RNA sequence: GGGAACGACUCGAGUAGAGUCGAAAAAGCCUCCUAAAGUGCUGGGAUUACAGGUGUGAGCCACUGUGCCCAGCCCGUUUUUUGUCUUUUGAGACAAGGUCUCUUUCUGUCACCCAGGCUGGAGUCUAUUGGUGCAAUCACGGCUCACUGCAUGCAGCUAUUGCCUAAAAUUCGUUUUAGGCAAUAGAAAAGAAACAACAACAACAAC
Reactivity to 2A3 in 0.01 (KOAc 150mM, MgCl2 10mM, bicine 150mM(pH8.5), 24C), signal-to-noise 3, nucleotides 027 to 156: a000g060c030c030u010c050c010u190a190a130a010g010u060g040c020u020g000g000g010a050u080u270a080c010a000g070g000u050g000u000g030a000g000c000c000a020c000u010g010u040g010c010c020c010a020g000c020c000c010g010u060u080u060u000u160u020g090u030c070u070u190u060u210g190a050g000a010c030a050a060g060g020u050c040u010c040u080u190u020c030u060g090u180c050a050c030c030c000a030g050g000c020u060g040g010a030g040u000c030u050a100u070u150g030g000u040g040c040a050a080u130c050a050c120g000g000c010u020c010a000c000u030g010c020a050u040g000c020a020g020
Reactivity to DMS in 0.01 (KOAc 150mM, MgCl2 10mM, bicine 150mM(pH8.5), 24C), signal-to-noise 1, nucleotides 027 to 156: a100g020c060c010u010c020c030u010a070a080a080g010u010g010c030u000g000g020g010a100u000u010a050c010a000g010g030u030g020u000g000a110g000c000c010a160c030u010g040u000g000c030c000c000a090g030c010c010c040g000u000u000u000u000u000u000g020u000c010u000u000u000u000g010a100g000a020c030a060a080g030g000u000c000u000c040u000u010u000c020u010g010u000c050a140c000c020c020a190g030g020c040u020g010g020a110g030u000c050u000a080u010u010g020g040u010g020c030a100a110u010c040a130c050g030g000c020u010c020a180c070u000g000c050a090u000g000c070a170g000